[RMDB]
RNA sequence: GGGAACGACUCGAGUAGAGUCGAAAAGGCGGAGAUGCCCUUGACGAAACGCUUGAGAAUCAUCGGCCGGCCGGCCACCCCGCGCAUCGCCCCCUCGGCCACGGCGAGGUAAUAGCGGACCAGAUCGAUAUAAAUAGGCCUUCGGGCCUAUUUAUAUAAAAGAAACAACAACAACAAC
Reactivity to DMS in 0.01 (KOAc 150mM, MgCl2 10mM, bicine 150mM(pH8.5), 24C), signal-to-noise 1, nucleotides 027 to 126: g000g040c030g000g010a180g000a160u010g010c060c020c020u000u000g000a110c080g010a100a120a070c110g000c040u010u000g050a050g010a180a130u000c060a050u000c040g030g020c090c070g010g010c110c080g030g010c040c070a110c080c030c000c040g010c070g000c050a060u000c100g030c040c010c030c060c060u000c080g000g000c010c030a080c120g030g020c050g000a050g000g030u000a050a040u030a080g020c040g020g000a060c050c070a140g000a100u000c050g000